[RMDB]
RNA sequence: GGGAACGACUCGAGUAGAGUCGAAAAGGUUCCCGGGCUUACCUACGGGAACUGCUGGUUUCCCCUUAUGUCCAGUCCCUCUCCCGUCCUGGUGAAGGGAGAUUCCGGAACGUUUAGCAUUUGAGGGUAAGGGGUGUGUUCGCACACCCCAAAAGAAACAACAACAACAAC
Reactivity to 2A3 in 0.01 (KOAc 150mM, MgCl2 10mM, bicine 150mM(pH8.5), 24C), signal-to-noise 4, nucleotides 027 to 129: g060g040u000u000c000c000c010g010g010g000c070u040u090a070c030c010u020a010c000g000g000g000a000a000c010u020g070c060u050g060g070u020u050u000c040c000c000c000u090u070a010u180g000u010c020c000a020g010u000c020c000c000u000c000u000c000c010c010g080u050c010c030u100g110g050u240g070a020a040g040g050g000a010g010a000u060u070c030c040g080g030a040a020c010g060u050u050u210a030g020c050a120u000u010u080g090a110g010g030g010u030a010a080